Background:
Structure probing data (DMS and 2A3) for a 207-nucleotide construct. The DMS profile rests on 8,781 reads. Values are in units of 0.01, from 0 to 300, in steps of 10. The 2A3 profile rests on 3,858 reads.

RNA sequence: GGGAACGACUCGAGUAGAGUCGAAAAAUGUACUCCACCAGCAGGUUCCGGAAACCGGAUAUCUCACCCGCGUUCAGGUGGUGGCGGGUGACCACCUGGCCCAGGUAGGCGUAGAAGUCGCGAACCGUGGCGGCGAGCUCCGAGUGCUGCAGGAAGAUAGACAGAAGAUAUUCGUAUCUUCUGUCUAAAAAGAAACAACAACAACAAC
Reactivity to DMS in 0.01 (KOAc 150mM, MgCl2 10mM, bicine 150mM(pH8.5), 24C), signal-to-noise 3, nucleotides 027 to 156: a090u000g010u000a070c030u010c030c010a100c020c040a130g010c040a100g030g010u000u000c020c040g010g010a120a100a080c050c000g000g020a110u000a050u000c040u000c020a050c020c000c010g020c020g040u000u000c050a050g010g030u010g020g010u010g030g020c040g020g010g020u010g010a060c030c020a040c010c010u010g020g010c010c030c020a070g010g030u000a050g000g030c050g030u000a120g020a110a140g030u000c030g030c040g000a070a130c040c060g020u000g040g000c030g030g010c030g000a090g020c050u000c020c040g010a140g020u000g040c050u010g000c010a090g000g020a080a100g010a260
Reactivity to 2A3 in 0.01 (KOAc 150mM, MgCl2 10mM, bicine 150mM(pH8.5), 24C), signal-to-noise 4, nucleotides 027 to 156: a000u080g020u050a050c020u020c010c000a030c010c010a020g030c000a020g020g060u060u020c030c030g040g060a120a080a080c090c040g020g010a040u050a070u120c040u020c010a020c000c010c010g020c040g030u080u100c040a020g020g030u020g020g020u020g040g040c050g010g010g020u020g000a000c000c000a000c000c000u020g050g010c010c020c020a020g030g000u050a050g000g080c020g000u010a040g040a170a010g040u060c010g010c030g030a050a040c040c020g030u040g070g010c020g010g010c020g010a020g010c010u020c050c030g020a030g040u070g020c010u020g010c000a020g060g010a030a020g020a050